[RMDB]
RNA sequence: GGGAACGACUCGAGUAGAGUCGAAAAGCAAGAUGAUGCGGGACAUGCCGAUCGUCGGCCUCGCCCAUGCGGGCGGCACCGCGUGCCUGCUCACGGUGCUCUCGCAACUGCCGGCGCUCGCGCGGCAAUGGGUAAUCCAGUUCGCUGGAUUACCCAUAAAAGAAACAACAACAACAAC
Reactivity to 2A3 in 0.01 (KOAc 150mM, MgCl2 10mM, bicine 150mM(pH8.5), 24C), signal-to-noise 2, nucleotides 027 to 126: g000c030a010a070g010a110u150g010a050u150g180c040g030g050g010a140c160a060u230g060c010c000g010a020u030c010g010u000c000g000g030c020c030u080c080g030c010c010c020a010u070g000c010g040g020g010c040g010g000c020a010c010c000g010c020g060u070g050c010c160u190g040c040u040c010a000c020g040g000u000g020c010u000c000u000c000g010c000a030a050c030u030g020c000c010g050g010c010g030c040u090c050g050c010g030c000g020g010c030a050
Reactivity to DMS in 0.01 (KOAc 150mM, MgCl2 10mM, bicine 150mM(pH8.5), 24C), signal-to-noise 2, nucleotides 027 to 126: g010c050a070a080g010a060u010g010a060u000g000c010g010g000g010a130c190a120u000g030c020c010g000a030u000c020g020u000c030g010g020c010c070u000c280g010c020c040c000a180u000g010c020g000g000g000c240g010g010c020a020c010c010g030c060g010u000g010c070c060u010g020c050u020c030a060c000g020g010u000g000c000u000c010u000c000g010c000a040a070c150u000g010c010c010g030g020c000g020c110u000c100g040c090g020c020g010g000c090a150